[RMDB]
RNA sequence: GGGAACGACUCGAGUAGAGUCGAAAAGGCGGUGGUGCCCACGACCUGCUGGCGCAGGUUGGCGAUCGGCACGCUGAGUGUCCCGAUCAUGCGCCGGGCGGUGUCGUCCUCGGCGAUGUCGCUGGUCUGGUAUGACCGUGUUCGCACGGUCAUACCAAAAAGAAACAACAACAACAAC
Reactivity to DMS in 0.01 (KOAc 150mM, MgCl2 10mM, bicine 150mM(pH8.5), 24C), signal-to-noise 1, nucleotides 027 to 126: g000g010c030g010g040u000g050g010u000g020c010c000c170a120c030g010a010c010c000u010g000c000u000g030g010c170g020c010a050g020g000u000u000g010g020c300g010a050u020c080g020g020c000a040c010g020c170u050g020a120g030u010g000u000c050c040c010g000a060u000c070a110u000g000c030g010c010c000g000g000g010c010g030g000u060g020u000c000g000u000c080c120u000c170g000g010c000g000a080u010g010u000c000g050c000u000g000g020u000c050